Structure probing data (DMS and 2A3) for a 177-nucleotide construct. The data come from the RNA Mapping Database (RMDB), library TTRDEL. The RNA was probed in 150 mM KOAc, 10 mM MgCl2 and 150 mM bicine (pH 8.5) at 24 C.
RNA sequence: GGGAACGACUCGAGUAGAGUCGAAAAGAUAUGGAUUUAGCCCUGUGAGACCGUUGAAAUCGGAAACGAUGGAGGUCCCAGGAAGCUAAAUCCUAAGUCAAAAUCACGUAGCUUCGGCUACGUGAAAGAAAUCUCUCUUGUUCGCAAGAGAGAUUUCAAAAGAAACAACAACAACAAC
Reactivity to DMS in 0.01 (KOAc 150mM, MgCl2 10mM, bicine 150mM(pH8.5), 24C), signal-to-noise 2, nucleotides 027 to 126: g020a010u000a300u000g000g000a000u000u000u000a000g030c000c000c000u000g000u010g030a160g020a010c000c000g030u010u000g040a060a130a010u000c010g000g010a130a120a200c010g000a020u000g000g000a090g010g010u000c000c000c000a020g020g020a080a090g030c000u010a000a000a010u010c000c000u010a020a070g010u000c050a070a100a120a240u010c000a010c000g000u000a000g010c000u000u000c240g040g010c000u000a010c000g010u000g000a010a050a070
Reactivity to 2A3 in 0.01 (KOAc 150mM, MgCl2 10mM, bicine 150mM(pH8.5), 24C), signal-to-noise 2, nucleotides 027 to 126: g080a030u050a030u110g010g000a000u000u010u000a000g000c040c000c000u010g080u140g070a300g020a020c020c010g120u240u050g020a000a000a000u010c000g000g000a080a040a020c030g000a010u020g060g040a020g020g000u000c000c000c000a000g010g060a050a040g000c000u010a000a000a000u000c000c000u020a090a020g010u000c030a030a030a040a230u030c000a010c000g000u000a000g000c010u100u000c300g160g000c000u000a000c010g000u000g020a000a000a000

For 2A3, 2,843 sequencing reads were counted.